[RMDB]
An RNA of 170 nucleotides, treated with DMS and 2A3 and read out base by base.
RNA sequence: GGGAACGACUCGAGUAGAGUCGAAAAUGGGCCUCAGUUCCGAGCGAAGAGCCGAACCGGGAAGAGGAAGCGCCCGAGAGGGAGCCAAUGCCAAAGAGGUGGGGAUCGUCGGAAGGUAUCGUCCCAAAAACUUUACAGUUCGCUGUAAAGAAAAGAAACAACAACAACAAC
Reactivity to DMS in 0.01 (KOAc 150mM, MgCl2 10mM, bicine 150mM(pH8.5), 24C), signal-to-noise 8, nucleotides 027 to 129: u040g010g010g020c080c030u010c040a060g010u040u070c010c010g010a070g020c200g040a040a040g040a120g020c010c040g000a060a110c070c080g000g000g000a060a080g000a030g000g040a060a040g060c160g020c070c040c050g000a090g030a070g000g010g010a050g020c040c060a070a070u060g040c080c070a070a090a090g000a070g000g020u030g030g040g020g020a040u030c030g040u020c000g020g010a040a020g000g010u040a080u050c070g020u030c000c020c000a060a040a040a050a070
Reactivity to 2A3 in 0.01 (KOAc 150mM, MgCl2 10mM, bicine 150mM(pH8.5), 24C), signal-to-noise 8, nucleotides 027 to 129: u060g010g010g010c000c010u060c030a040g030u100u020c040c010g000a020g020c050g040a060a070g020a040g050c000c020g010a020a010c010c020g010g000g010a030a030g010a020g020g010a010a000g030c030g040c010c000c000g040a060g020a030g020g000g000a000g000c010c020a080a070u170g050c010c020a080a100a020g070a020g020g010u090g010g010g000g020a020u040c020g020u000c010g040g010a010a010g030g000u050a040u150c040g040u010c010c010c000a040a040a020a010a020
Record summary:
The DMS profile rests on 32,983 reads.